An RNA of 177 nucleotides, treated with DMS and 2A3 and read out base by base. DMS (dimethyl sulfate) methylates the pairing face of unpaired adenines and cytosines. The DMS profile rests on 4,355 reads. Source: RMDB library OK2TRN, as collected in RNAgym. For DMS the reverse transcriptase was MarathonRT.
RNA sequence: GGGAACGACUCGAGUAGAGUCGAAAACGCGUCUAGAGCGCUAGCGACCGAGGCUGGGUCGGCCUUCGACCCCAGCGCCGUCGCGACGAUAGCGCCAACGGCGGCGCCUGCAGGCCCACCCAGGAGCUCGAUCUAAAGUUUUCGAACUUUAGAUCGAAAAAGAAACAACAACAACAAC
Reactivity to DMS in 0.01 (KOAc 150mM, MgCl2 10mM, bicine 150mM(pH8.5), 24C), signal-to-noise 4, nucleotides 027 to 126: c090g020c030g030u000c030u010a170g010a190g010c000g010c010u000a060g010c030g010a100c050c050g010a060g030g020c020u000g000g000g010u000c160g000g030c190c110u000u010c050g000a130c040c050c000c050a090g000c010g010c030c080g020u000c010g030c030g010a030c120g010a290u010a070g010c020g020c000c030a090a090c110g000g020c000g020g020c020g030c020c030u000g000c110a030g000g000c010c010c040a090c070c120c010a050g000g010a190g000c160
Reactivity to 2A3 in 0.01 (KOAc 150mM, MgCl2 10mM, bicine 150mM(pH8.5), 24C), signal-to-noise 2, nucleotides 027 to 126: c030g010c010g010u030c040u100a100g040a070g130c020g010c040u020a030g040c020g050a050c070c050g080a070g130g020c000u010g000g000g000u010c010g000g070c040c050u110u110c050g100a110c000c050c050c040a000g010c020g040c000c010g000u010c000g020c020g000a010c040g040a060u140a080g100c060g000c010c010a020a020c050g030g000c000g040g000c020g010c010c000u030g040c050a020g000g060c000c000c000a000c010c020c000a010g030g010a030g010c030